[RMDB]
RNA sequence: GGGAACGACUCGAGUAGAGUCGAAAAACGCACCGUUACGACGGUGCGAUGCCAAGGUAUCUUUACGUCUACAUUGCUGUUGUCGUGUGUGACUGUACCUUUGGUAAGCCACCAUACGUGGUGGCAAUAGUCUCGGAGUGUUCGCACUCCGAGACUAAAAAGAAACAACAACAACAAC
Reactivity to DMS in 0.01 (KOAc 150mM, MgCl2 10mM, bicine 150mM(pH8.5), 24C), signal-to-noise 1, nucleotides 027 to 126: a070c020g000c000a010c000c000g010u000u000a060c170g010a020c000g030g000u000g030c010g020a020u000g030c000c000a000a020g000g000u000a000u000c280u020u010u020a080c150g020u020c000u000a030c000a030u010u020g040c060u090g000u000u000g030u020c020g020u010g000u000g000u010g000a020c010u000g010u000a010c010c000u000u000u010g050g060u000a060a140g000c000c000a000c000c030a040u020a040c130g010u030g010g010u000g000g000c030a020a030
Reactivity to 2A3 in 0.01 (KOAc 150mM, MgCl2 10mM, bicine 150mM(pH8.5), 24C), signal-to-noise 3, nucleotides 027 to 126: a000c000g000c000a010c010c000g030u030u060a150c300g020a000c000g080g040u000g010c020g010a020u050g050c000c000a010a000g010g000u010a080u070c040u070u260u080a050c050g000u000c000u010a000c000a040u170u240g020c070u170g050u300u170g030u130c000g020u020g000u000g000u010g040a020c000u010g020u000a000c010c000u060u040u010g010g000u020a100a010g000c000c010a000c000c000a000u020a110c290g070u010g000g000u000g000g000c010a010a010
Annotation: Structure probing data (DMS and 2A3) for a 177-nucleotide construct. It was measured as part of the RMDB libraries RFM100 and RFMREP. Reactivities are rounded to 0.1 and cut off at 0 and 3.